[RMDB]
RNA sequence: GGGAACGACUCGAGUAGAGUCGAAAAUAGAAGAAGAGGCUAGGUGGUAUUCCUGUGUGGGAUACUUGGUAAUAUGUAACGCUAAUUGCAUAAGAUUGUAGGACGGAAUUUACAGUCUUGGUUUUUAAAAACUUCUCGUAGUUCGCUACGAGAAGAACCUUAGCUCCAUGUUCGCAUGGAGCUAAGGAAAAGAAACAACAACAACAAC
Reactivity to 2A3 in 0.01 (KOAc 150mM, MgCl2 10mM, bicine 150mM(pH8.5), 24C), signal-to-noise 3, nucleotides 027 to 156: u100a000g050a090a000g020a030a000g020a000g040g030c080u090a010g080g010u060g000g000u050a060u060u070c020c040u070g040u060g020u180g180g000g020a010u010a020c030u000u060g040g000u070a050a050u060a060u180g050u030a080a000c020g000c140u080a100a080u110u070g010c010a010u010a110a030g020a020u030u060g010u050a010g010g060a030c120g010g040a050a040u060u080u050a030c020a010g000u000c000u020u040g020g010u010u020u020u070u150a100a130a020a040a040c000u010u000c000u010c000g000u000a000g000u030u030c110g000c070u000a000c000g000a000g000a000a000g000a000a000